RNA sequence: GGGAACGACUCGAGUAGAGUCGAAAAGAAACUGUAGAAAAGGGCAAAGAAAUUACGAUAGCGUUAACGACAAAUGAAAACGCAAUAUUUGACGGAAUCACGCCAAACGUUUACUAUCUAGAACACGCAAUACGGGUAGAUUCGUCUACCCGUAUUGAAAAGAAACAACAACAACAAC
Reactivity to DMS in 0.01 (KOAc 150mM, MgCl2 10mM, bicine 150mM(pH8.5), 24C), signal-to-noise 7, nucleotides 027 to 126: g010a080a080a080c090u010g010u010a080g000a050a080a080a060g020g010g020c090a070a060a100g010a070a080a080u000u010a050c110g010a100u010a080g010c020g020u010u000a060a180c080g010a120c130a040a050a050u010g010a050a050a040a080c140g020c110a050a080u000a090u000u000u000g000a050c030g010g000a110a110u010c190a040c050g010c010c030a020a040a090c070g010u000u000u000a050c080u000a060u000c040u010a060g010a090a060c170a050c250g000
Reactivity to 2A3 in 0.01 (KOAc 150mM, MgCl2 10mM, bicine 150mM(pH8.5), 24C), signal-to-noise 2, nucleotides 027 to 126: g030a030a090a010c070u060g040u100a030g110a050a100a020a020g060g010g000c060a040a050a080g080a050a140a050u120u080a030c050g050a060u050a090g010c020g030u060u010a100a030c030g080a030c050a020a100a070u110g080a040a050a030a020c060g010c030a020a010u150a070u080u030u020g030a040c010g000g010a050a060u080c010a010c050g000c000c000a000a170a040c020g000u000u020u050a010c010u020a030u070c010u020a020g060a130a050c060a010c120g010